Description:
Conditions: 150 mM KOAc, 10 mM MgCl2 and 150 mM bicine (pH 8.5), 24 C. Chemical mapping of a 177-nucleotide RNA with 2A3.

RNA sequence: GGGAACGACUCGAGUAGAGUCGAAAAGAGGUGCUGGUCGCUCUUGGCCAGCUGGCAGCGGCGGUGGUAGUGGCCGUCGGUGUCGCGGUGGUGUCCCUGCUCGCCAUUGCGCGGGUGGAGUGGCCCGUGGCGGCUGGUCAUUCGUGACCAGCCGCCAAAAAGAAACAACAACAACAAC
Reactivity to 2A3 in 0.01 (KOAc 150mM, MgCl2 10mM, bicine 150mM(pH8.5), 24C), signal-to-noise 1, nucleotides 027 to 126: g120a010g020g070u160g040c020u020g010g030u000c000g040c020u090c120u100u070g010g000c000c030a000g000c000u000g000g040c000a060g050c000g000g000c000g000g050u100g050g080u180a090g210u080g180g000c000c000g010u000c000g000g070u030g030u030c060g000c060g000g100u040g040g070u110g030u110c010c010c000u000g030c000u000c030g000c000c100a300u200u300g000c070g000c000g030g040g000u160g070g040a040g000u300g000g000c000c000c000g000
It was measured as part of the RMDB library OK1LIB.